RNA sequence: GGGAACGACUCGAGUAGAGUCGAAAACGCAGGCCUUUUUAUUUGGGGGAGAGGGAAGUCAUGAAUCUGGACAAGCAAGAUGCACAAACUAUUAGCUCAUACAUAAGGGCAUCAAGACCAGAUUACAAAGGUCCGGUAUUCGUAGAUUUAUCUCGCAACUAGGAUUAGUGUUCGCACUAAUCCUAGUAAAAGAAACAACAACAACAAC
Reactivity to DMS in 0.01 (KOAc 150mM, MgCl2 10mM, bicine 150mM(pH8.5), 24C), signal-to-noise 1, nucleotides 027 to 156: c110g000c260a100g030g000c030c050u000u000u050u030u010a080u070u000u000g030g020g020g060g000a090g000a040g010g000g020a050a050g010u010c050a120u010g000a080a070u010c010u000g010g010a110c040a080a130g000c060a060a160g000a030u000g000c010a010c000a120a060a180c060u000a060u000u010a200g030c030u000c100a100u000a080c090a100u000a090a200g000g010g000c010a010u000c050a050a170g000a130c020c030a100g010a110u000u010a170c040a060a060a140g010g020u000c000c030g010g020u010a080u000u000c050g040u000a160g000a150u000u010u000a120u000c000u000c000g020c030a140
Reactivity to 2A3 in 0.01 (KOAc 150mM, MgCl2 10mM, bicine 150mM(pH8.5), 24C), signal-to-noise 2, nucleotides 027 to 156: c060g020c050a020g070g050c000c030u100u080u060u160u180a270u190u240u230g010g000g000g000g000a070g000a000g000g020g010a020a010g020u050c010a040u080g020a020a020u020c010u020g030g020a030c020a050a010g160c020a030a020g020a090u020g020c060a030c090a130a100a030c120u080a070u160u100a090g010c020u070c090a100u080a160c030a030u250a100a080g040g010g000c000a030u000c030a080a000g010a030c000c030a000g010a080u030u020a040c010a040a120a000g060g000u000c000c020g070g010u100a090u020u060c050g010u020a010g000a070u020u060u100a060u110c050u010c040g000c020a020